An RNA of 177 nucleotides, treated with DMS and 2A3 and read out base by base. Reactivities are rounded to 0.1 and cut off at 0 and 3. The reactions ran in a buffer of 150 mM KOAc, 10 mM MgCl2 and 150 mM bicine (pH 8.5), at 24 C. 2A3 adducts were read by reverse transcription with SuperScript II with manganese. For DMS the reverse transcriptase was MarathonRT. Reactivities are given for positions 27 through 126.
[RMDB]
RNA sequence: GGGAACGACUCGAGUAGAGUCGAAAAGACAGUUCAGGAGGUGGCUCGCUCCCUCACCGACCCUCUGGUCACGGAGACUCACCUUGGGGAUCCAUCCUCUCCAAGCGGCCUCGGUUGAGACGCCUUCGAAUUGAAAUGGAUUCGUCCAUUUCAAUUCAAAAGAAACAACAACAACAAC
Reactivity to DMS in 0.01 (KOAc 150mM, MgCl2 10mM, bicine 150mM(pH8.5), 24C), signal-to-noise 8, nucleotides 027 to 126: g010a120c130a070g000u010u010c080a080g010g020a060g000g010u000g000g010c010u010c040g000c100u000c030c020c010u000c090a080c040c020g010a090c150c030c040u000c050u030g000g010u010c120a090c100g000g000a080g000a090c080u020c100a120c190c020u000u000g000g000g010g000a040u020c060c080a080u020c070c080u010c000u000c000c010a030a040g010c080g010g000c070c070u000c020g000g000u000u010g000a020g000a060c050g000c020c000u000u010c150
Reactivity to 2A3 in 0.01 (KOAc 150mM, MgCl2 10mM, bicine 150mM(pH8.5), 24C), signal-to-noise 9, nucleotides 027 to 126: g050a020c060a040g040u080u190c040a050g010g030a010g000g040u040g030g010c010u010c020g030c040u040c010c000c000u010c020a030c000c020g040a050c010c010c010u040c050u060g040g030u090c050a040c110g050g010a040g020a040c010u020c080a070c020c000u020u030g010g000g010g010a010u050c060c020a080u040c020c040u010c000u000c010c000a020a000g020c030g050g010c010c040u020c020g020g000u030u060g010a020g010a010c020g020c000c000u030u060c050